[RMDB]
RNA sequence: GGGAACGACUCGAGUAGAGUCGAAAAACAGUUCCUACUUAUCCGGUUUUAACGCUGUUUUAAUGGCGCAAAGGUUUACGGAUAAACAACUAAUAAUUAAACCUUUUGUGUGCGAAACGUGGUUGUUAUAAUACCGAGCGUUUCGACGCUCGGUAAACGAGUAGUUAAACUUCGGUUUAACUACUCGAAAAGAAACAACAACAACAAC
Reactivity to 2A3 in 0.01 (KOAc 150mM, MgCl2 10mM, bicine 150mM(pH8.5), 24C), signal-to-noise 1, nucleotides 027 to 156: a000c010a010g020u010u020c000c000u000a080c030u010u010a000u000c000c000g030g030u030u060u140u060a080a030c030g000c000u020g200u110u140u120u300a250a130u210g050g000c040g010c030a030a020a000g010g000u000u010u010a000c000g000g000a010u000a060a150a000c010a030a000c080u260a100a230u120a130a030u110u160a050a050a010c010c000u100u080u130u100g080u030g040u030g050c130g060a050a050a020c090g050u140g090g020u080u000g000u000u050a150u020a260a070u070a050c000c000g040a000g000c000g030u040u120u000c100g040a000c000g000c000u010c000g000g000u010a000a000a040
The record gives the reactivity of an RNA of 207 nucleotides to 2A3. Values cover nucleotides 27 to 156. For 2A3, 502 sequencing reads were counted.